[RMDB]
RNA sequence: GGGAACGACUCGAGUAGAGUCGAAAAAAUCGUCGACGCAUCGACGACGGUCCUGCCAUGAGACCGUAACGACGACAUGUCGCCUCGAAUGGCGUCGGGGAGCCGGCAGCUUACCCCAAGGAUGAGCAAAAGAAUGAAACGUUCGCGUUUCAUUCAACACUGAUCGCAAGUUCGCUUGCGAUCAGUGAAAAGAAACAACAACAACAAC
Reactivity to 2A3 in 0.01 (KOAc 150mM, MgCl2 10mM, bicine 150mM(pH8.5), 24C), signal-to-noise 1, nucleotides 027 to 156: a010a000u140c100g020u000c000g040a020c020g100c120a090u090c000g110a120c020g000a010c000g010g000u020c000c000u020g140c060c000a140u120g000a030g010a170c000c050g000u020a020a000c000g050a000c010g100a060c010a140u300g010u050c000g000c090c020u060c010g060a090a060u050g080g000c040g030u040c050g000g050g020g000a000g080c020c000g100g000c060a090g000c050u030u050a140c000c090c000c000a000a010g060g000a090u070g070a000g060c030a000a070a070a000g010a000a000u000g000a000a000a000c000g030u090u000c170g040c020g060u000u020u000c010a030u000u000c000a000a000